[RMDB]
RNA sequence: GGGAACGACUCGAGUAGAGUCGAAAACGUCUGAAACGUCUGAACUUUAGCAAAAAGAACGACACGUACUACGAAGUGAUCGAUGUGUUCGGAUUCCAUCAGCUCAUGUCCCGAACGGGCACCCCCUUGCACUACCUGUUAAGCUACGGCAACGUGCCGAAUGGUGUUGAUUCGUCAACACCAUUCGAAAAGAAACAACAACAACAAC
Reactivity to 2A3 in 0.01 (KOAc 150mM, MgCl2 10mM, bicine 150mM(pH8.5), 24C), signal-to-noise 5, nucleotides 027 to 156: c040g030u020c020u050g020a020a040a040c050g010u000c010u030g050a040a050c030u100u210u190a090g050c110a030a070a080a080a070g080a090a020c050g050a010c040a010c030g100u120a080c050u050a050c140g180a150a050g020u020g040a240u030c010g040a050u080g060u010g030u090u020c010g000g010a040u100u010c060c010a030u040c040a050g010c020u020c070a060u080g080u040c000c020c010g030a090a050c080g000g020g000c030a030c000c000c010c010c000u000u030g000c010a010c010u030a050c040c000u020g040u090u060a100a020g020c040u040a030c030g010g000c000a050a020c040g010u020g010c010
Reactivity to DMS in 0.01 (KOAc 150mM, MgCl2 10mM, bicine 150mM(pH8.5), 24C), signal-to-noise 2, nucleotides 027 to 156: c070g000u000c010u000g000a060a130a120c060g000u010c010u000g010a080a040c040u000u000u000a130g020c070a040a060a090a130a140g020a100a110c070g000a050c040a050c060g020u000a130c070u000a150c070g000a060a090g040u010g000a140u000c090g020a070u010g000u000g000u040u000c040g000g000a130u000u000c070c030a160u000c060a080g000c040u010c070a070u000g020u000c010c010c020g000a080a090c080g000g000g000c040a090c010c010c000c010c030u000u000g000c030a060c010u010a100c060c010u000g020u000u000a060a180g030c090u000a090c050g000g000c030a070a120c080g000u020g010c010